[RMDB]
Structure probing data (2A3 and DMS) for a 177-nucleotide construct.
Values are in units of 0.01, from 0 to 300, in steps of 10.
The reactions ran in a buffer of 150 mM KOAc, 10 mM MgCl2 and 150 mM bicine (pH 8.5), at 24 C.
For DMS the reverse transcriptase was MarathonRT.

RNA sequence: GGGAACGACUCGAGUAGAGUCGAAAAAGUACCUGAAACUGCUGAAAGGGAACCGAAUCGUUUCCAGUGUCUAUAAUCCGUGGUAUAUUUCAUUGGCGAGUGUGUGCGUGCGUGUGCUGUGGCAGCGCGUGUGCAUACUAUUCGUAGUAUGCACACGAAAAGAAACAACAACAACAAC
Reactivity to 2A3 in 0.01 (KOAc 150mM, MgCl2 10mM, bicine 150mM(pH8.5), 24C), signal-to-noise 9, nucleotides 027 to 126: a000g070u050a040c010c000u020g040a090a060a040c050u090g040c010u060g040a120a060a040g020g010g020a020a010c020c010g040a060a070u090c040g010u010u030u010c020c010a040g030u020g040u100c030u040a120u060a100a070u020c020c010g030u060g070g020u050a080u030a040u120u110u080c090a100u060u130g050g010c020g020a040g030u050g010u020g010u010g020c030g010u030g000c010g010u100g030u040g030c030u030g010u040g090g000c010a030g020c030g000
Reactivity to DMS in 0.01 (KOAc 150mM, MgCl2 10mM, bicine 150mM(pH8.5), 24C), signal-to-noise 9, nucleotides 027 to 126: a080g020u010a090c010c000u010g000a080a100a100c080u000g010c040u000g010a070a130a100g000g000g010a090a090c050c050g000a050a060u010c060g010u000u000u000c010c000a110g020u010g010u010c050u000a070u010a070a070u010c030c040g020u000g000g010u000a060u010a070u010u010u000c030a070u010u010g010g010c060g000a060g020u010g010u010g010u000g010c030g020u000g010c040g010u000g010u000g010c030u000g010u010g010g010c030a070g010c110g010